[RMDB]
RNA sequence: GGGAACGACUCGAGUAGAGUCGAAAAUUGAAUAUAAGAGGUACAGUAAAAUGAUUAAAAGUGUUUUUAAAAGGGUAGCGACUAUUCAUUAUCACUAUGACUCGUGAUAAGUCAUUAAACAGCUGUGUCCAUCCCUAUCAUUCGUGAUAGGGAUGGAAAAAGAAACAACAACAACAAC
Reactivity to 2A3 in 0.01 (KOAc 150mM, MgCl2 10mM, bicine 150mM(pH8.5), 24C), signal-to-noise 3, nucleotides 027 to 126: u060u020g010a020a020u150a040u100a100a120g030a000g010g090u010a030c000a030g020u090a010a050a130a140u140g040a060u070u080a000a040a070a070g030u050g100u060u030u010u020u110a120a230a040a010g110g020g000u040a000g050c020g040a040c020u030a030u010u070c020a000u010u060a020u050c020a010c030u070a010u260g050a040c020u030c140g000u010g030a030u000a030a040g020u010c020a040u000u170a040a080a060c070a020g040c010u000g010u000g010
Reactivity to DMS in 0.01 (KOAc 150mM, MgCl2 10mM, bicine 150mM(pH8.5), 24C), signal-to-noise 3, nucleotides 027 to 126: u010u010g000a080a060u010a030u030a020a120g020a120g000g010u010a030c030a020g030u010a060a050a060a060u000g010a110u020u040a070a090a060a120g030u000g000u000u010u020u010u030a050a050a080a160g030g000g000u020a020g000c060g000a090c100u000a050u010u040c100a040u020u010a020u000c060a050c020u010a040u030g000a090c090u010c130g000u010g000a070u010a070a020g000u030c040a050u040u030a040a020a090c210a080g000c040u000g000u020g000
Notes: Structure probing data (2A3 and DMS) for a 177-nucleotide construct. It was measured as part of the RMDB library OK1LIB. DMS adducts were read by reverse transcription with MarathonRT. The reactions ran in a buffer of 150 mM KOAc, 10 mM MgCl2 and 150 mM bicine (pH 8.5), at 24 C. 2A3 adducts were read by reverse transcription with SuperScript II with manganese.